RNA sequence: GGGAACGACUCGAGUAGAGUCGAAAAAUGGCUACCACAUCUAAGGAAGGCAGCAGGCGCGCAAAUUACCUAUCCCUGACUCAGGGAGGUAGUAAACAGAAAUAAUGGCACAUGUUUUAAACAUGUGGCGUACCAUAGGGUUCGCCCUAUGGUACGCAAAAGAAACAACAACAACAAC
Reactivity to DMS in 0.01 (KOAc 150mM, MgCl2 10mM, bicine 150mM(pH8.5), 24C), signal-to-noise 2, nucleotides 027 to 126: a090u000g010g010c040u010a070c010c030a100c130a060u020c070u000a140a160g000g010a090a090g000g010c050a060g000c040a030g000g010c040g030c090g000c100a030a060a030u010u000a030c010c000u000a160u000c020c000c000u000g010a100c170u010c070a070g010g000g020a000g000g000u000a000g020u000a090a060a070c140a120g000a120a040a110u020a070a090u000g020g000c000a010c000a000u000g000u000u000u020u000a040a090a010c020a010u000g010u000g000
Reactivity to 2A3 in 0.01 (KOAc 150mM, MgCl2 10mM, bicine 150mM(pH8.5), 24C), signal-to-noise 1, nucleotides 027 to 126: a000u070g020g000c010u040a050c040c000a010c000a090u030c060u060a050a010g030g020a040a060g070g000c030a010g000c020a010g020g020c000g000c010g000c100a000a080a090u040u020a020c000c000u040a180u160c010c000c000u090g190a300c070u080c240a010g000g000g000a010g000g000u000a010g020u040a010a090a010c060a030g180a060a060a010u230a060a090u110g160g020c010a000c000a000u010g110u000u050u030u210a110a160a000c010a010u000g000u000g050
Source: RMDB library RFMREP, as collected in RNAgym. An RNA of 177 nucleotides, treated with DMS and 2A3 and read out base by base. 2A3 adducts were read by reverse transcription with SuperScript II with manganese. The reactions ran in a buffer of 150 mM KOAc, 10 mM MgCl2 and 150 mM bicine (pH 8.5), at 24 C. The 2A3 profile rests on 1,843 reads. The DMS profile rests on 1,332 reads.